[RMDB]
Conditions: 150 mM KOAc, 10 mM MgCl2 and 150 mM bicine (pH 8.5), 24 C. An RNA of 177 nucleotides, treated with DMS and 2A3 and read out base by base. The DMS profile rests on 3,244 reads. DMS (dimethyl sulfate) methylates the pairing face of unpaired adenines and cytosines. For 2A3, 8,699 sequencing reads were counted. For DMS the reverse transcriptase was MarathonRT.
RNA sequence: GGGAACGACUCGAGUAGAGUCGAAAAGAUAUGGACGAUGAUAACACGCUGUGGUUCGAAGAACUCGGAAACGAGGGAGAACCACUGCGUGACAUCGUCCUAAGUCAAAGUCAUCUUCGGAUGACAAGCUAAACACAAACUUCGGUUUGUGUUUAGCAAAAGAAACAACAACAACAAC
Reactivity to DMS in 0.01 (KOAc 150mM, MgCl2 10mM, bicine 150mM(pH8.5), 24C), signal-to-noise 3, nucleotides 027 to 126: g010a030u010a300u000g010g010a020c000g000a000u000g000a190u020a070a100c020a020c000g010c000u010g010u000g010g000u010u000c000g000a050a170g010a150a220c000u010c010g010g000a070a090a160c010g000a010g000g000g000a070g000a010a010c010c000a020c010u000g000c000g020u010g010a080c000a000u000c000g000u000c000c000u000a010a050g010u010c030a030a080a160g000u000c000a000u000c000u000u020c230g010g000a000u000g000a020c020a060a100
Reactivity to 2A3 in 0.01 (KOAc 150mM, MgCl2 10mM, bicine 150mM(pH8.5), 24C), signal-to-noise 3, nucleotides 027 to 126: g020a020u090a050u140g000g010a000c010g010a010u030g020a070u090a300a090c000a010c000g010c000u030g020u000g000g030u010u000c030g120a300a020g020a070a040c000u000c020g030g020a060a040a050c010g000a010g000g000g030a050g000a010a010c010c020a000c000u000g000c000g020u000g000a000c000a000u000c000g000u000c000c000u000a030a000g000u000c020a040a050a020g010u000c000a000u000c000u030u080c280g150g000a000u000g000a000c000a000a000